Record summary:
This 177-nucleotide RNA was probed chemically with 2A3 and DMS. For DMS, 3,704 sequencing reads were counted. The RNA was probed in 150 mM KOAc, 10 mM MgCl2 and 150 mM bicine (pH 8.5) at 24 C.
[RMDB]
RNA sequence: GGGAACGACUCGAGUAGAGUCGAAAAGCAAACAAAUUUAUUUCUUCUACCUUCGCUGUUAAUCAAGUUGUAGGUAGUAAAUUCCACAUAACCGGUGAAGGAACCUCAUACUUUUGGUAUAGAUACAGUCAUAAAUUAGUUUCGACUAAUUUAUGACAAAAGAAACAACAACAACAAC
Reactivity to 2A3 in 0.01 (KOAc 150mM, MgCl2 10mM, bicine 150mM(pH8.5), 24C), signal-to-noise 5, nucleotides 027 to 126: g040c040a040a040a080c050a060a170a070u130u200u080a120u070u130u050c040u070u020c010u020a040c010c000u010u020c000g010c000u010g040u110u120a100a090u160c110a070a050g030u110u110g030u280a050g020g010u000a000g000u000a000a020a010u070u010c010c010a030c010a060u100a100a060c030c040g050g020u030g040a040a050g050g030a050a030c010c020u050c040a040u060a140c020u080u150u180u300g090g000u060a060u030a100g040a020u110a140c050a080
Reactivity to DMS in 0.01 (KOAc 150mM, MgCl2 10mM, bicine 150mM(pH8.5), 24C), signal-to-noise 5, nucleotides 027 to 126: g010c140a060a080a090c090a050a080a120u000u000u010a060u010u000u010c060u010u000c030u000a070c000c010u010u000c020g010c010u010g010u000u020a100a100u020c210a060a050g010u000u010g030u000a010g010g000u000a030g010u000a040a070a160u010u010c030c020a080c070a080u010a100a080c090c060g020g000u000g000a070a080g000g010a130a100c090c020u000c090a050u010a040c040u000u000u000u010g020g020u010a050u000a080g010a070u000a060c230a110